[RMDB]
Chemical mapping of a 177-nucleotide RNA with DMS. DMS adducts were read by reverse transcription with MarathonRT. The reactions ran in a buffer of 150 mM KOAc, 10 mM MgCl2 and 150 mM bicine (pH 8.5), at 24 C.
RNA sequence: GGGAACGACUCGAGUAGAGUCGAAAAUGGAAUGGGAGCACAAUGCUGGGAUUUACCUAAUUAUUUACUCGAUAAAUAUUGGGGGUUUAGAACAUGGGGAAAUGCUGAUGCUAUGGCUCAAAAAUCCUCUAGCUAACCCAUUCGUGGGUUAGCUAGAAAAAGAAACAACAACAACAAC
Reactivity to DMS in 0.01 (KOAc 150mM, MgCl2 10mM, bicine 150mM(pH8.5), 24C), signal-to-noise 1, nucleotides 027 to 126: u020g010g010a120a080u010g000g010g000a070g010c110a090c090a060a230u000g040c020u000g010g010g000a130u000u010u020a080c040c010u030a050a020u000u020a030u000u000u000a010c040u000c110g010a240u000a040a000a020u010a050u000u000g020g000g000g000g000u000u000u000a080g000a010a060c230a130u010g000g020g020g000a100a060a050u000g010c080u010g000a100u010g010c100u010a160u000g000g010c040u000c060a010a020a050a100a070u000c040c010